[RMDB]
An RNA of 207 nucleotides, treated with 2A3 and read out base by base. It was measured as part of the RMDB library M2RFPK. For 2A3, 573 sequencing reads were counted. The RNA was probed in 150 mM KOAc, 10 mM MgCl2 and 150 mM bicine (pH 8.5) at 24 C.
RNA sequence: GGGAACGACUCGAGUAGAGUCGAAAAGCUCCAUCAGGUGAACGAUCUCGGUUGUUUCUCUGAAGGCAUGAUCACCCCGUCCGAUGCGGAAGUUCGUGCUUCCGUCGAACGCGAAAGUCGGACGGCGAAAACGAGUUACCGUUCGCGGUAACUCGAACCUGUCGUAGUUGUUCGCAACUACGACAGGAAAAGAAACAACAACAACAAC
Reactivity to 2A3 in 0.01 (KOAc 150mM, MgCl2 10mM, bicine 150mM(pH8.5), 24C), signal-to-noise 1, nucleotides 027 to 156: g020c040u030c050c000a160u070c090a020g080g030u070g060a080a030c000g010a070u040c000u070c230g070g000u070u020g000u010u020u030c030u000c020u000g020a070a090g080g040c040a040u140g020a060u060c000a040c020c000c000c000g010u010c000c000g000a010u040g000c040g010g000a000a000g000u030u300c300g150u300g140c000u020u000c000c000g060u010c000g000a120a090c050g000c110g110a030a020a000g050u020c000g000g000a000c000g030g000c020g020a060a060a000a030c010g000a000g000u020u000a000c000c000g010u020u030c300g010c000g120g000u020a000a000c000u010c000g000a000a000